[RMDB]
Chemical mapping of a 177-nucleotide RNA with 2A3 and DMS. The 2A3 profile rests on 5,028 reads. For DMS the reverse transcriptase was MarathonRT. The reactions ran in a buffer of 150 mM KOAc, 10 mM MgCl2 and 150 mM bicine (pH 8.5), at 24 C.
RNA sequence: GGGAACGACUCGAGUAGAGUCGAAAACGAUGUGAGCAGACUCGGUACGGAUCGAUAUGAUCUCUAGUACCAUGCCAUGCUGUGUAUCGCAGUACUCGCUAGCACAUGUGCAGGUACCUCCAUGCUGCCCGAGGUUAUAUUUCGAUAUAACCUCGGGAAAAGAAACAACAACAACAAC
Reactivity to 2A3 in 0.01 (KOAc 150mM, MgCl2 10mM, bicine 150mM(pH8.5), 24C), signal-to-noise 4, nucleotides 027 to 126: c030g040a040u090g070u060g080a020g020c030a010g030a120c060u090c170g000g000u000a010c020g010g000a010u010c010g050a110u060a100u300g030a020u020c050u010c030u060a020g000u010a010c000c000a000u020g000c000c010a050u060g000c070u040g020u040g050u110a100u120c060g000c040a000g000u020a110c050u030c090g000c050u020a030g040c000a010c010a060u090g040u100g040c030a030g010g030u030a090c000c000u030c010c000a030u090g040c020u070g010
Reactivity to DMS in 0.01 (KOAc 150mM, MgCl2 10mM, bicine 150mM(pH8.5), 24C), signal-to-noise 4, nucleotides 027 to 126: c060g000a030u000g020u000g010a050g010c030a030g020a100c050u010c160g010g000u000a040c070g010g000a000u000c020g000a190u010a070u010g000a030u000c000u000c170u010a080g030u000a020c000c000a140u000g010c030c000a090u000g010c070u000g000u000g010u000a040u010c090g010c070a090g000u000a070c070u000c080g020c060u020a100g010c070a080c110a050u000g010u000g020c030a070g010g000u000a050c030c050u000c020c050a060u000g010c100u000g000